[RMDB]
Structure probing data (2A3 and DMS) for a 177-nucleotide construct.
Values cover nucleotides 27 to 126.
Source: RMDB library OK2TRN, as collected in RNAgym.
Conditions: 150 mM KOAc, 10 mM MgCl2 and 150 mM bicine (pH 8.5), 24 C.
RNA sequence: GGGAACGACUCGAGUAGAGUCGAAAAGGAUGCUCUAGAUGCUGAUGGCUCGAGCAGCAGCAUGUACUCCUACUAUGUUGACGAGGAGUACGCAUACAGCGACGACGUUGUAGUCUACAACAUCACGCGGCUCUAAUAAAUUCGUUUAUUAGAGCCGAAAAGAAACAACAACAACAAC
Reactivity to 2A3 in 0.01 (KOAc 150mM, MgCl2 10mM, bicine 150mM(pH8.5), 24C), signal-to-noise 6, nucleotides 027 to 126: g060g000a020u040g010c020u030c020u060a060g000a060u050g030c020u040g030a070u070g110g050c030u040c130g070a040g000c010a000g000c010a000g000c000a020u130g000u010a000c000u000c050c000u010a120c030u080a120u300g230u190u200g150a110c100g040a010g000g000a010g020u000a000c010g000c000a050u090a050c000a010g010c020g090a120c100g030a050c040g110u040u020g010u030a040g030u010c010u050a040c030a120a010c000a030u030c050a010c090g080
Reactivity to DMS in 0.01 (KOAc 150mM, MgCl2 10mM, bicine 150mM(pH8.5), 24C), signal-to-noise 9, nucleotides 027 to 126: g010g010a030u000g010c030u000c210u000a030g010a030u000g020c010u000g010a100u000g000g010c040u000c100g010a140g000c030a050g000c020a030g010c030a070u000g010u000a000c000u000c000c000u000a110c100u000a120u000g020u010u010g010a190c300g000a040g010g000a020g020u000a000c010g010c110a060u010a040c050a040g000c000g010a220c230g000a110c050g030u000u000g020u000a060g000u000c050u000a030c120a030a020c020a020u000c030a100c150g010